[RMDB]
RNA sequence: GGGAACGACUCGAGUAGAGUCGAAAAGAUAUGGAACCUAAGCUCUUUGAUCAGGACCUAUAUCGGAAACGAUAUAGAGAAUGGGAGAGUAUGGUUCCUAAGUCAAAGACUACGUUCGCGUAGUCAACUCGCCUUAGUACUUCGGUACUAAGGCGAGAAAAGAAACAACAACAACAAC
Reactivity to 2A3 in 0.01 (KOAc 150mM, MgCl2 10mM, bicine 150mM(pH8.5), 24C), signal-to-noise 1, nucleotides 027 to 126: g010a030u120a050u150g030g030a020a030c030c010u050a290a150g050c000u050c020u160u300u100g150a220u240c020a000g010g000a020c000c000u020a000u010a000u020c020g010g000a040a040a050c010g000a020u000a000u000a000g030a000g000a030a060u000g010g000g010a020g020a000g000u070a050u120g020g020u010u000c000c000u040a010a000g040u020c030a080a040a110g010a090c000u000a000c000g030u060u070c300g030c050g100u000a010g000u000c000a000a040